RNA sequence: GGGAACGACUCGAGUAGAGUCGAAAAAAAAUCUAGUGCAACUAUUGUCUUAAUUACUUAGGCUAAAAGAAAUAAGUAUUAAAGCGGGACAAGGCAUCGACAUUUGAUACAAAUAUUGAUCAAUGGAACAAGAAACACUACUUCGGUAGUGUUUCAACUAAUGGAUACUCUUCGGAGUAUCCAUUAGAAAAGAAACAACAACAACAAC
Reactivity to DMS in 0.01 (KOAc 150mM, MgCl2 10mM, bicine 150mM(pH8.5), 24C), signal-to-noise 1, nucleotides 027 to 156: a030a010a020a050u000c020u000a120g000u010g030c010a230a000c050u000a070u010u000g020u010c070u000u010a040a120u000u000a030c030u000u000a060g020g040c060u010a060a090a070a140g000a130a130a110u000a050a010g010u000a010u000u000a080a090a120g000c060g050g000g020a010c030a030a080g000g030c020a040u000c000g020a270c010a030u000u000u060g010a080u000a060c040a070a060a020u000a110u030u030g020a110u000c010a040a090u010g020g020a010a090c070a010a120g010a050a000a010c000a010c000u000a000c000u000u000c290g010g010u020a010g050u000g000u000u020u000c020a050a120
Reactivity to 2A3 in 0.01 (KOAc 150mM, MgCl2 10mM, bicine 150mM(pH8.5), 24C), signal-to-noise 2, nucleotides 027 to 156: a000a000a010a030u040c040u050a000g010u000g040c000a010a030c050u130a070u300u050g010u000c000u080u140a160a110u080u080a070c010u030u050a010g020g000c010u060a110a070a000a170g060a040a090a000u030a050a000g040u000a020u050u160a140a100a010g030c100g050g030g010a010c010a040a000g040g030c000a030u050c050g070a030c010a050u070u050u070g040a040u140a120c030a030a160a020u290a130u160u060g010a010u020c030a020a050u050g040g020a010a070c020a110a150g010a000a000a000c010a000c000u070a030c040u060u070c300g090g000u000a000g000u000g000u000u000u000c000a000a000
About this RNA:
The record gives the reactivity of an RNA of 207 nucleotides to DMS and 2A3. DMS adducts were read by reverse transcription with MarathonRT. The RNA was probed in 150 mM KOAc, 10 mM MgCl2 and 150 mM bicine (pH 8.5) at 24 C. For DMS, 2,232 sequencing reads were counted. 2A3 adducts were read by reverse transcription with SuperScript II with manganese.